[RMDB]
RNA sequence: GGGAACGACUCGAGUAGAGUCGAAAAGGCGAUGAACUUGACUGGGUGCGCCAGAGCCAACUCCUGCACUGGGUUGCUGCUCAUUGGCACGCGCUGCACCUGGUGGAUGAGCAUGUCGUGGGAGUUGUCCGCGAAGAACUUGCGCUCAGCCUGGUCCCACUGCAAGGGUAUUCGUACCCUUGCAGUGAAAAGAAACAACAACAACAAC
Reactivity to 2A3 in 0.01 (KOAc 150mM, MgCl2 10mM, bicine 150mM(pH8.5), 24C), signal-to-noise 3, nucleotides 027 to 156: g020g000c080g110a230u100g100a120a090c060u160u190g080a000c000u010g020g000g000u030g010c040g000c010c010a000g010a000g030c000c000a010a010c010u120c050c070u210g080c200a090c100u090g010g000g010u030u030g020c130u050g000c000u030c020a180u040u080g020g000c010a030c110g140c070g030c110u110g000c000a000c000c000u000g010g000u030g000g070a090u100g030a010g010c020a050u070g010u010c000g000u030g020g000g020a300g040u050u080g050u090c000c000g000c000g010a010a040g050a140a100c050u060u090g020c060g000c050u050c090a000g000c010c000u000g000g040u000c000c000
Reactivity to DMS in 0.01 (KOAc 150mM, MgCl2 10mM, bicine 150mM(pH8.5), 24C), signal-to-noise 2, nucleotides 027 to 156: g020g010c000g020a140u010g010a160a050c030u000u000g010a060c010u030g000g000g000u000g010c000g050c010c010a060g000a140g030c010c020a040a030c030u000c020c020u010g000c160a130c040u010g010g020g010u000u010g020c030u010g020c010u000c020a090u010u010g030g080c010a110c080g050c050g080c040u000g010c000a050c000c010u000g010g000u010g050g000a100u010g020a070g060c020a160u010g000u000c020g030u020g010g020g000a180g010u000u010g000u000c020c000g000c020g010a080a120g010a050a150c050u000u000g010c010g010c050u000c040a110g030c020c000u000g000g010u000c030c010